This 177-nucleotide RNA was probed chemically with 2A3 and DMS.

[RMDB]
RNA sequence: GGGAACGACUCGAGUAGAGUCGAAAAACUGUCUAUUCUGCACAGGUAAUAAAAGCGUUUGCAGUAACCUGCUAGAUUAGAUCUGGACAGGGAGUUUGAGAUUCUCUUUACCAUGUCUUGAGAUCUCAACACAACACAAGUUCGCUUGUGUUGUGUUAAAAGAAACAACAACAACAAC
Reactivity to 2A3 in 0.01 (KOAc 150mM, MgCl2 10mM, bicine 150mM(pH8.5), 24C), signal-to-noise 2, nucleotides 027 to 126: a000c020u020g020u000c030u050a130u150u000c010u070g010c060a030c020a040g090g030u080a150a050u100a140a300a030a010g060c110g120u080u280u300g000c070a020g050u040a040a070c000c000u000g000c080u040a020g000a060u120u030a020g030a090u020c050u060g030g020a050c000a000g070g000g000a050g060u010u100u050g030a020g000a020u220u020c000u000c000u060u000u010a070c080c060a110u190g030u000c020u040u040g050a030g040a030u000c010u020c020
Reactivity to DMS in 0.01 (KOAc 150mM, MgCl2 10mM, bicine 150mM(pH8.5), 24C), signal-to-noise 5, nucleotides 027 to 126: a090c040u000g020u000c030u000a060u010u000c010u000g020c120a170c050a020g000g010u010a090a180u010a070a080a120a130g010c040g020u010u020u000g010c010a090g020u010a110a090c000c000u000g010c110u000a020g000a020u000u010a050g010a300u010c100u000g000g000a040c020a010g000g000g000a060g010u010u000u010g010a030g000a110u010u000c000u000c010u000u010u000a080c040c070a090u000g000u000c040u000u000g010a120g000a080u010c030u000c040